[RMDB]
RNA sequence: GGGAACGACUCGAGUAGAGUCGAAAAGUGCAUGUGUGCACAAGAGGAGGAGAGGGCUCCAGCCCUGAGCGCUGGCUGCCUUGGGCUGGUUAAUGGAGACAGGUAGCUGCAUGUGGAUAUCCAAGAAUGCUUCUCUUGCAUACCUGUGUGAACGUGAGAUAUCACGAGCUUUCGAGCUCGUGAUAUCAAAAGAAACAACAACAACAAC
Reactivity to 2A3 in 0.01 (KOAc 150mM, MgCl2 10mM, bicine 150mM(pH8.5), 24C), signal-to-noise 1, nucleotides 027 to 156: g030u020g000c000a050u120g060u020g000u020g050c080a000c010a050a050g030a000g000g020a000g010g070a030g020a090g020g030g060c030u080c000c010a000g000c000c000c020u070g010a030g000c090g040c110u130g160g020c120u080g000c030c000u000u020g000g000g000c020u020g010g030u010u080a050a030u140g040g000a080g000a010c000a000g010g010u020a000g080c060u040g000c050a000u020g100u130g040g010a010u000a040u150c100c040a060a020g050a170a060u050g070c050u030u140c020u030c000u000u100g000c000a010u010a070c000c000u000g040u000g010u050g090a010a020c020g030u030g040a110
Chemical mapping of a 207-nucleotide RNA with 2A3. The reactions ran in a buffer of 150 mM KOAc, 10 mM MgCl2 and 150 mM bicine (pH 8.5), at 24 C. The data come from the RNA Mapping Database (RMDB), library OK3TST. Values cover nucleotides 27 to 156.